[RMDB]
RNA sequence: GGGAACGACUCGAGUAGAGUCGAAAAUCAAGCGCUCGGCAUCCCGUCAGAUCUUGCUGCGCGUGCCGGCCGGCUCGCCGCUACCGUUGAGGUCUCAGAUGCUGACGGCCGCCUCUCCUGCAAGACCACGACGAUAAGUUUUCGAACUUAUCGUCGUAAAAGAAACAACAACAACAAC
Reactivity to 2A3 in 0.01 (KOAc 150mM, MgCl2 10mM, bicine 150mM(pH8.5), 24C), signal-to-noise 2, nucleotides 027 to 126: u060c000a050a050g080c050g000c090u040c070g050g000c020a040u050c030c050c000g020u030c050a040g000a080u010c030u050u080g060c040u050g010c050g000c000g040u020g010c040c000g190g040c050c060g000g000c030u000c040g080c060c050g060c020u060a060c000c080g080u090u160g130a050g020g010u000c010u020c030a030g030a040u090g110c000u050g020a020c010g030g020c010c010g000c000c000u040c010u000c000c000u070g020c010a060a010g030a030c020c040
Reactivity to DMS in 0.01 (KOAc 150mM, MgCl2 10mM, bicine 150mM(pH8.5), 24C), signal-to-noise 2, nucleotides 027 to 126: u010c080a080a200g020c050g000c050u010c020g000g010c030a110u000c080c030c030g010u000c130a050g010a090u000c030u000u010g030c090u000g020c050g010c080g050u010g000c090c020g020g000c090c120g010g000c020u000c080g020c010c020g030c040u000a050c060c070g010u020u000g010a100g010g000u000c070u010c130a100g000a050u010g010c050u000g010a030c040g010g010c100c040g010c080c020u010c060u000c010c000u000g040c050a050a090g000a040c110c030
An RNA of 177 nucleotides, treated with 2A3 and DMS and read out base by base. Reactivities are given for positions 27 through 126. Source: RMDB library OK2TRN, as collected in RNAgym. DMS (dimethyl sulfate) methylates the pairing face of unpaired adenines and cytosines.